Chemical mapping of a 177-nucleotide RNA with 2A3 and DMS. For DMS, 1,032 sequencing reads were counted. The 2A3 profile rests on 479 reads. Source: RMDB library OK1LIB, as collected in RNAgym. Conditions: 150 mM KOAc, 10 mM MgCl2 and 150 mM bicine (pH 8.5), 24 C.

[RMDB]
RNA sequence: GGGAACGACUCGAGUAGAGUCGAAAAAGACAGGGCUGGCCCAGACCCAGGAGCCAAUCACUUGUCUGUAGACACAUGAGCUAGAGACACCAUGGUGACAGCCCCUCCUGUCGUGUCAGGAGGCAGCGGCAGAGGAAGUCUUCGGACUUCCUCUGCCAAAAGAAACAACAACAACAAC
Reactivity to 2A3 in 0.01 (KOAc 150mM, MgCl2 10mM, bicine 150mM(pH8.5), 24C), signal-to-noise 1, nucleotides 027 to 126: a030g090a020c090a040g060g000g000c040u030g040g000c030c000c000a030g040a160c010c030c030a000g020g010a030g080c000c040a000a010u060c060a040c200u000u100g000u000c010u000g290u130a020g040a030c070a070c030a240u300g060a060g000c010u000a010g000a000g000a040c000a000c080c110a130u160g060g000u090g090a070c010a040g000c060c000c000c000u000c020c000u020g010u160c080g080u100g060u090c010a000g020g040a020g000g060c010a000g050c000
Reactivity to DMS in 0.01 (KOAc 150mM, MgCl2 10mM, bicine 150mM(pH8.5), 24C), signal-to-noise 2, nucleotides 027 to 126: a050g000a050c000a180g000g000g020c010u000g000g000c040c030c000a000g000a220c000c020c020a120g000g010a270g000c020c000a040a280u000c000a140c070u020u060g000u000c020u000g000u000a100g000a120c000a020c230a300u020g000a120g040c040u000a020g070a040g000a090c000a050c300c230a100u090g010g000u000g000a000c220a220g020c220c000c000c000u000c000c000u000g000u000c280g000u010g020u000c040a040g010g030a060g000g000c110a120g010c230